[RMDB]
RNA sequence: GGGAACGACUCGAGUAGAGUCGAAAAUGGGAAGUCUACCUGGUCGAGGGGUUGUCGGAUGAGCGAACUGCGGUGAUCACGAAGACGCACCAGGCGAUGAUCGACGGUAUCGGUGCCAUCGACAUCGGCCAGUUGAUCCUGGAAACGAGUCCGUCGGGAGUUUGCUGUGGUUCGCCACAGCAAACUCAAAAGAAACAACAACAACAAC
Reactivity to 2A3 in 0.01 (KOAc 150mM, MgCl2 10mM, bicine 150mM(pH8.5), 24C), signal-to-noise 1, nucleotides 027 to 156: u090g010g010g040a020a040g030u000c010u020a080c030c000u010g020g020u010c010g010a030g040g050g050g030u060u090g010u010c020g080g000a060u050g000a020g050c010g030a050a010c020u040g020c030g010g050u050g020a060u030c000a000c220g100a080a030g050a010c060g000c100a020c000c010a000g080g030c020g000a110u120g030a030u010c000g000a020c020g030g010u110a090u060c040g030g010u080g040c000c010a020u050c040g020a020c000a050u050c010g000g020c010c000a000g010u050u090g000a010u000c000c040u010g020g010a000a090a120c010g000a000g030u040c010c000g020u020c030g010g100
This 207-nucleotide RNA was probed chemically with 2A3. The reactions ran in a buffer of 150 mM KOAc, 10 mM MgCl2 and 150 mM bicine (pH 8.5), at 24 C. Source: RMDB library OK3TST, as collected in RNAgym. For 2A3, 1,163 sequencing reads were counted. For 2A3 the reverse transcriptase was SuperScript II with manganese.